[RMDB]
RNA sequence: GGGAACGACUCGAGUAGAGUCGAAAAGAUAUGGAUCACACGAAGAUAGUACACUCCGAUAAGACGUUAUAUCGGAAACGAUAUACGUCUUUUGACGGAGGUACUAUCUUCGUGUGAUCCUAAGUCACAUUAAUGUGACGUUCGCGUCACAUUAAUGAAAAGAAACAACAACAACAAC
Reactivity to DMS in 0.01 (KOAc 150mM, MgCl2 10mM, bicine 150mM(pH8.5), 24C), signal-to-noise 5, nucleotides 027 to 126: g010a050u000a300u000g000g000a010u000c000a000c000a010c000g020a020a000g000a010u000a010g010u010a010c000a210c010u000c000c000g010a170u010a020a010g000a030c000g010u010u010a010u000a000u010c010g000g000a100a080a140c010g010a010u000a000u000a010c000g000u000c000u000u000u010u000g010a200c110g000g000a020g000g020u000a000c000u000a000u000c000u000u000c000g010u000g000u000g000a000u000c000c000u000a000a050g010u010c040a300